Chemical mapping of a 177-nucleotide RNA with 2A3.

RNA sequence: GGGAACGACUCGAGUAGAGUCGAAAAGGUCGCAUCAACCCGACAUGGAAGUCACCGCGCUCGAUCCCUCGCAGAAGCUCGAUCGAAUCGACCUCUUUGAUGACAAGCCUAGUCCUGGGAAACCUUUGCACUACCUCCAGUUCGCUGGAGGUAGUGCAAAAGAAACAACAACAACAAC
Reactivity to 2A3 in 0.01 (KOAc 150mM, MgCl2 10mM, bicine 150mM(pH8.5), 24C), signal-to-noise 2, nucleotides 027 to 126: g010g030u050c000g000c070a010u020c050a120a150c000c000c000g020a020c020a040u030g020g010a000a100g040u100c030a000c040c010g100c010g020c040u000c000g080a120u030c060c020c010u020c020g010c030a030g000a160a000g020c030u030c020g030a060u000c000g000a060a030u080c040g040a040c000c000u000c020u140u130u140g100a110u160g000a010c030a070a000g060c010c020u040a030g080u010c000c020u080g020g000g000a060a060a000c010c000u020u050u010
The data come from the RNA Mapping Database (RMDB), library OK1LIB. Conditions: 150 mM KOAc, 10 mM MgCl2 and 150 mM bicine (pH 8.5), 24 C. For 2A3 the reverse transcriptase was SuperScript II with manganese. 2A3 is a SHAPE reagent: it acylates the 2'-hydroxyl of flexible nucleotides of all four kinds. Values cover nucleotides 27 to 126.